RNA sequence: GGGAACGACUCGAGUAGAGUCGAAAAUCCACUAUGAAUCUAGUCACUUAAUAAACACAAUUAGCUACUGUGUGUAAUAGUGAGUGUUGAUAACACAAAAUAAUAGUAUAGUUUUGGAAGAUUAUACGCGCCCUUGCUCCGUUCGCGGAGCAAGGAAGACAAGGACUUCGUUCGCGAAGUCCUUGUCAAAAGAAACAACAACAACAAC
Reactivity to 2A3 in 0.01 (KOAc 150mM, MgCl2 10mM, bicine 150mM(pH8.5), 24C), signal-to-noise 1, nucleotides 027 to 156: u000c000c000a000c010u190a100u240g090a110a040u020c090u130a100g120u000c010a000c000u020u040a020a060u080a120a300a010c030a000c000a070a090u120u050a030g040c010u110a090c080u030g000u000g000u000g020u090a050a080u090a120g010u000g050a030g000u010g000u010u000g070a230u210a210a000c010a000c020a040a060a000a060u160a060a010u060a070g000u000a000u000a040g000u050u020u020u190g090g050a100a070g000a070u070u000a000u080a090c040g080c010g000c030c000c000u000u000g000c000u000c010c000g030u040u000c090g000c030g030g030a000g000c000a000a000g000g000a000a000

An RNA of 207 nucleotides, treated with 2A3 and read out base by base. The 2A3 profile rests on 523 reads. Reactivities are given for positions 27 through 156. The reactions ran in a buffer of 150 mM KOAc, 10 mM MgCl2 and 150 mM bicine (pH 8.5), at 24 C.